[RMDB]
RNA sequence: GGGAACGACUCGAGUAGAGUCGAAAACCCUUUGUGUUCGCACAAAGGGAAAAGUCAGAAAGAUCAAAAAGAUCAGCGAUAAAACUGACAUAUAAACGCAAAAAACCUCCUCGUUCGCGAGGAGGAAUCCAAUUAUUGGGUUCGCCCAAUAAUUGGAAAAAGAAACAACAACAACAAC
Reactivity to DMS in 0.01 (KOAc 150mM, MgCl2 10mM, bicine 150mM(pH8.5), 24C), signal-to-noise 1, nucleotides 027 to 126: c010c000c020u000u000u000g020u000g020u000u010c220g040c000a020c020a000a010a010g020g000g000a010a030a080a120g000u000c000a000g000a050a170a110g010a020u000c000a160a110a100a120a210g020a030u000c020a090g000c200g000a150u000a060a090a120a090c000u000g010a010c020a050u000a040u020a010a040a120c110g000c190a000a030a050a080a060a030c000c000u030c000c000u000c020g000u000u000c300g010c030g000a000g020g000a000g000g040a000a000
Reactivity to 2A3 in 0.01 (KOAc 150mM, MgCl2 10mM, bicine 150mM(pH8.5), 24C), signal-to-noise 1, nucleotides 027 to 126: c010c000c000u020u000u000g020u000g020u020u040c160g120c050a010c000a020a010a010g000g000g010a070a120a010a000g010u010c020a010g080a080a110a030g010a040u030c050a020a080a190a250a110g000a020u020c010a040g080c070g160a050u110a210a140a000a090c000u010g000a000c040a000u230a020u030a060a130a010c080g030c090a050a050a040a010a040a080c000c000u000c000c000u030c010g020u060u000c280g010c000g100a000g000g000a000g000g000a000a000